[RMDB]
RNA sequence: GGGAACGACUCGAGUAGAGUCGAAAAGAUAUGGAACGCGUGACGCUGAUGACCUCGGAAACGAGCAAGGCGCACGACGUUCCUAAGUCAAAACUUAAUGCCCUCGGUUCGCCGAGGGCAUUAAGAACAACAGCCAUCUGUUCGCAGAUGGCUGUUGAAAAGAAACAACAACAACAAC
Reactivity to DMS in 0.01 (KOAc 150mM, MgCl2 10mM, bicine 150mM(pH8.5), 24C), signal-to-noise 2, nucleotides 027 to 126: g010a030u010a300u010g000g000a030a000c010g000c000g000u010g020a180c000g090c000u000g000a070u000g020a040c300c000u010c010g000g010a150a070a160c010g010a010g000c000a070a090g000g000c000g040c020a020c010g010a030c000g000u000u000c000c000u010a010a050g010u010c000a070a110a160a220c020u000u000a010a010u000g000c000c000c000u010c000g010g000u010u010c280g010c010c010g000a060g000g000g020c000a000u000u000a000a000g020a060a160